Overview:
The data come from the RNA Mapping Database (RMDB), library OK2TST. The record gives the reactivity of an RNA of 177 nucleotides to 2A3 and DMS. DMS (dimethyl sulfate) methylates the pairing face of unpaired adenines and cytosines. 2A3 is a SHAPE reagent: it acylates the 2'-hydroxyl of flexible nucleotides of all four kinds. For 2A3, 1,107 sequencing reads were counted. The DMS profile rests on 784 reads.
RNA sequence: GGGAACGACUCGAGUAGAGUCGAAAAGAGCUGGCGAUAGCGGACAAGAUCACGAUUGGCCAUGUCCAGUGCUGCCUUGCUGCUGUCAGCCUUGGCCUCAGCAGUCUGCAAAGCAAGCUUGUAGCGACGGCCUAGUGCCUUUCGAGGCACUAGGCCGAAAAGAAACAACAACAACAAC
Reactivity to 2A3 in 0.01 (KOAc 150mM, MgCl2 10mM, bicine 150mM(pH8.5), 24C), signal-to-noise 1, nucleotides 027 to 126: g020a020g000c000u000g030g010c030g100a070u110a070g010c000g050g020a030c000a000a040g010a060u070c050a050c120g060a090u150u060g000g000c060c200a120u100g060u000c010c000a000g020u040g090c030u080g020c000c030u010u080g030c070u070g000c000u050g000u080c010a020g040c000c000u040u030g050g000c010c020u050c000a030g040c000a010g070u060c020u000g020c000a040a030a060g080c000a040a000g020c000u020u030g050u060a050g050c040g100a080
Reactivity to DMS in 0.01 (KOAc 150mM, MgCl2 10mM, bicine 150mM(pH8.5), 24C), signal-to-noise 1, nucleotides 027 to 126: g000a140g000c040u000g000g040c030g020a090u000a090g000c010g010g000a060c020a040a060g030a100u000c220a120c210g000a040u000u000g010g000c070c110a120u020g000u020c060c030a020g000u000g010c070u000g000c300c000u000u000g000c040u000g010c020u000g000u000c020a040g000c020c040u010u000g000g000c010c030u000c140a080g020c150a030g000u000c010u000g030c080a020a110a160g000c070a070a050g000c050u000u010g010u000a020g020c110g000a210